The data come from the RNA Mapping Database (RMDB), libraries RFM100 and RFMREP. An RNA of 177 nucleotides, treated with 2A3 and DMS and read out base by base. For 2A3 the reverse transcriptase was SuperScript II with manganese. The RNA was probed in 150 mM KOAc, 10 mM MgCl2 and 150 mM bicine (pH 8.5) at 24 C.
RNA sequence: GGGAACGACUCGAGUAGAGUCGAAAAGACGGUGCCUCCAAGGUCGACCCUCCAGCUCGUCUCUCCCCGUCGUCACCUACCUCUCUCUGUCACUCGCUCGCUCACUCACUCUUGCGCCUGAUUUGCUUAUGCGUGGUUUAUUCGUAAACCACGCAUAAAAAGAAACAACAACAACAAC
Reactivity to 2A3 in 0.01 (KOAc 150mM, MgCl2 10mM, bicine 150mM(pH8.5), 24C), signal-to-noise 6, nucleotides 027 to 126: g080a010c050g020g050u090g020c010c010u050c020c020a060a030g070g030u050c030g050a120c000c010c000u000c000c010a030g020c010u020c030g070u010c020u000c010u030c030c010c010c000g040u040c000g010u010c020a070c030c010u080a070c010c010u030c000u010c000u000c030u040g040u060c010a010c050u030c020g030c010u010c010g010c000u020c010a040c010u010c000a040c000u030c000u020u060g010c020g020c020c010u070g050a160u050u050u160g050c030u050
Reactivity to DMS in 0.01 (KOAc 150mM, MgCl2 10mM, bicine 150mM(pH8.5), 24C), signal-to-noise 3, nucleotides 027 to 126: g010a110c060g020g000u030g010c050c000u000c020c060a160a080g020g010u000c050g020a130c050c010c020u000c060c050a070g000c040u010c060g010u000c040u000c070u000c020c020c020c050g030u010c070g010u020c030a060c050c000u000a080c100c040u000c010u000c020u000c020u040g020u000c040a060c030u000c060g010c050u000c040g030c050u010c050a070c050u000c030a040c010u000c050u010u020g020c030g020c010c040u000g010a100u010u010u010g010c060u000